The record gives the reactivity of an RNA of 207 nucleotides to 2A3 and DMS.

RNA sequence: GGGAACGACUCGAGUAGAGUCGAAAAUGAAGCAAAUCCAUAAUUGCCAAUGAUGAGCAAUUCGCUAUUGCCGCCUAAAAACGGUUAGCCGGGGCUGCUAGAGUCUUGUUACCAAAGAUAGCCGGCGUUACGGCAUGAUGGUUCGCCAUCAUGCCAAGUAAGUGAUACAGUUCGCUGUAUCACUUACAAAAGAAACAACAACAACAAC
Reactivity to 2A3 in 0.01 (KOAc 150mM, MgCl2 10mM, bicine 150mM(pH8.5), 24C), signal-to-noise 5, nucleotides 027 to 156: u100g030a080a010g050c060a060a040a060u090c040c010a050u090a120a020u070u030g010c000c020a110a140u270g070a140u080g020a100g010c010a010a020u060u060c040g020c030u050a050u080u200g010c000c000g010c010c020u080a060a040a020a010a000c020g020g000u060u040a020g020c000c010g000g000g030g010c030u050g030c030u060a030g010a010g110u010c020u060u130g040u110u070a060c040c020a060a040a000g060a040u060a010g090c030c010g030g010c010g050u090u150a030c070g000g000c000a000u010g000a000u000g010g050u020u060c160g040c050c000a000u000c000a000u010g000c000c000a000a000
Reactivity to DMS in 0.01 (KOAc 150mM, MgCl2 10mM, bicine 150mM(pH8.5), 24C), signal-to-noise 3, nucleotides 027 to 156: u000g010a100a130g020c050a070a080a150u000c050c040a110u020a040a060u010u000g030c010c020a090a170u010g020a160u010g000a130g010c010a030a020u000u000c000g020c040u000a070u000u000g020c010c000g020c020c020u000a090a060a110a070a060c010g000g000u000u000a070g020c000c060g040g040g010g010c070u000g000c010u000a080g000a110g000u010c040u000u020g010u000u000a110c070c020a080a060a110g020a100u010a090g030c040c030g010g030c030g020u000u000a070c100g010g000c000a000u010g010a020u000g010g020u000u010c300g040c020c000a020u010c000a000u000g000c000c000a000a020
The data come from the RNA Mapping Database (RMDB), library M2RFPK. Conditions: 150 mM KOAc, 10 mM MgCl2 and 150 mM bicine (pH 8.5), 24 C.